Chemical mapping of a 177-nucleotide RNA with 2A3 and DMS.

[RMDB]
RNA sequence: GGGAACGACUCGAGUAGAGUCGAAAACGGAAUUGAAGCAUCUCAGUACGGCCAGGAAGAGAAAUCGAAUGAGACGCCGUUAGUAAUGGCGAAUGAACGCGGCACAGUCCAAACCGAAGCCUUCGGGAAAUCCAGACCCAUUCGUGGGUCUGGAUUUAAAAGAAACAACAACAACAAC
Reactivity to 2A3 in 0.01 (KOAc 150mM, MgCl2 10mM, bicine 150mM(pH8.5), 24C), signal-to-noise 2, nucleotides 027 to 126: c030g030g060a090a050u170u140g090a090a000g010c020a080u040c000u000c030a030g060u090a000c000g030g000c020c010a020g050g010a040a070g120a000g030a020a130a000u080c040g020a080a070u220g000a010g020a120c020g000c020c000g000u090u060a090g000u020a050a000u020g000g110c140g060a000a010u030g000a000a000c010g020c000g000g030c020a000c010a090g000u000c000c000a130a010a010c020c000g010a010a040g060c020c060u060u030c040g040g000g000
Reactivity to DMS in 0.01 (KOAc 150mM, MgCl2 10mM, bicine 150mM(pH8.5), 24C), signal-to-noise 1, nucleotides 027 to 126: c100g000g000a080a050u040u070g000a040a060g000c100a100u000c000u000c000a070g000u000a100c190g040g000c020c060a040g000g010a040a090g000a230g010a090a090a060u000c000g000a210a070u000g010a090g000a020c090g010c000c000g100u020u000a060g010u040a040a020u000g040g000c090g000a240a040u010g000a050a100c130g000c010g000g080c000a180c060a170g080u010c020c010a010a150a140c070c000g000a040a070g000c090c090u000u010c010g070g000g040

Conditions: 150 mM KOAc, 10 mM MgCl2 and 150 mM bicine (pH 8.5), 24 C.
For DMS, 1,267 sequencing reads were counted.